[RMDB]
RNA sequence: GGGAACGACUCGAGUAGAGUCGAAAAAGCAUCUUCGGAUGCUCUUUUAUCCUAAGUCCAAGCUUUGAUCUCCACGGAGCGAGGAUCUAUCGGAAACGAUAGGGAGCUCCGUGUGGAGGGAGCUUGGAUAUGGAGCUAACGUCCUUUCGAGGACGAAACAAAAGGUAACAUUCGUGUUACCUUUUGUAAAAGAAACAACAACAACAAC
Reactivity to 2A3 in 0.01 (KOAc 150mM, MgCl2 10mM, bicine 150mM(pH8.5), 24C), signal-to-noise 5, nucleotides 027 to 156: a000g010c010a010u020c020u100u110c260g150g000a010u010g030c010u050c010u020u060u020u080a080u020c000c000u020a080a040g020u000c010c010a010a000g000c020u110u130u090g100a210u160c000u010c010c000a000c000g010g000a000g000c000g010a300g020g000a000u000c000u000a000u010c000g030g050a110a030a030c010g000a000u000a000g000g010g000a010g010c000u000c000c000g030u040g000u000g010g010a000g010g010g000a010g000c000u000u000g000g000a000u000a000u000g000g000a030g020c060u130a180a060c020g010u010c000c000u060u100u120c220g070a020g000g010a010c020g030a090a050
Reactivity to DMS in 0.01 (KOAc 150mM, MgCl2 10mM, bicine 150mM(pH8.5), 24C), signal-to-noise 4, nucleotides 027 to 156: a010g010c000a000u000c010u010u010c300g040g000a010u000g000c000u010c010u000u000u000u010a090u000c000c000u000a080a260g030u000c010c010a020a060g050c010u000u020u000g010a040u000c000u010c040c000a020c020g020g020a020g020c010g010a150g040g010a040u000c000u000a010u010c000g000g010a260a160a300c010g010a020u000a030g000g010g010a120g030c000u000c000c010g020u000g000u000g000g000a120g020g000g000a010g010c000u000u000g010g010a010u000a020u010g000g010a080g020c090u010a090a130c030g000u010c000c010u000u010u010c270g000a040g000g000a020c000g000a050a140